[RMDB]
This 177-nucleotide RNA was probed chemically with 2A3 and DMS. For 2A3 the reverse transcriptase was SuperScript II with manganese. Source: RMDB library TTRINS, as collected in RNAgym.
RNA sequence: GGGAACGACUCGAGUAGAGUCGAAAAGAUAUGGAGUUGACUCGCUUGGAUUUAUAGGUACUCUGGGCCUAUAUCGGAAACGAUAUAGGCCCGUGAACCUAUUGUCAGCGAGGAGACUCCUAAGUCAGACCUACAAUAGGUUCGCCUAUUGUAGGUCAAAAGAAACAACAACAACAAC
Reactivity to 2A3 in 0.01 (KOAc 150mM, MgCl2 10mM, bicine 150mM(pH8.5), 24C), signal-to-noise 2, nucleotides 027 to 126: g060a030u120a050u270g010g010a000g010u010u020g090a060c000u000c010g050c020u170u300g280g020a090u300u300u170a040u050a010g060g000u020a080c070u070c230u300g040g030g010c020c020u000a010u010a000u010c010g040g060a090a070a040c000g000a020u010a000u000a000g020g040c060c000c010g010u000g000a000a000c010c000u000a000u000u000g010u010c000a000g010c000g000a000g000g000a000g010a000c000u030c000c000u010a150a020g050u000c050a060
Reactivity to DMS in 0.01 (KOAc 150mM, MgCl2 10mM, bicine 150mM(pH8.5), 24C), signal-to-noise 1, nucleotides 027 to 126: g020a040u010a300u000g000g000a000g010u000u000g000a300c000u000c000g000c000u000u000g000g000a040u000u020u000a000u020a020g000g000u000a070c050u000c010u010g000g010g000c010c000u010a010u000a000u000c010g010g000a210a160a210c000g000a030u000a030u000a020g000g000c000c000c000g000u000g000a080a010c010c000u000a010u000u000g000u000c000a010g010c020g020a020g000g000a300g000a010c000u070c020c000u000a020a090g010u000c070a120